[RMDB]
RNA sequence: GGGAACGACUCGAGUAGAGUCGAAAAGAUAUGGAAGGGAGUUGCAAGGCUGAGUGCAAUGAUGCACUUCGUUUCGGAAACGAAACGAGAGUGUUGAGCACCAGCCUUGCAACUCCCUUCCUAAGUCGUAUACCAGUUUGUUCGCAAACUGGUAUACAAAAGAAACAACAACAACAAC
Reactivity to DMS in 0.01 (KOAc 150mM, MgCl2 10mM, bicine 150mM(pH8.5), 24C), signal-to-noise 2, nucleotides 027 to 126: g010a120u010a300u030g000g010a010a000g000g000g010a030g010u000u000g020c000a000a030g000g020c000u010g000a160g030u000g010c000a230a230u000g010a140u000g000c000a010c000u000u000c000g000u000u020u000c010g030g000a120a110a270c010g010a010a000a000c000g000a050g000a030g000u000g020u000u000g000a120g010c000a010c000c010a010g010c000c000u010u010g000c010a000a000c000u000c000c000c000u000u020c000c000u000a000a060g020u010c110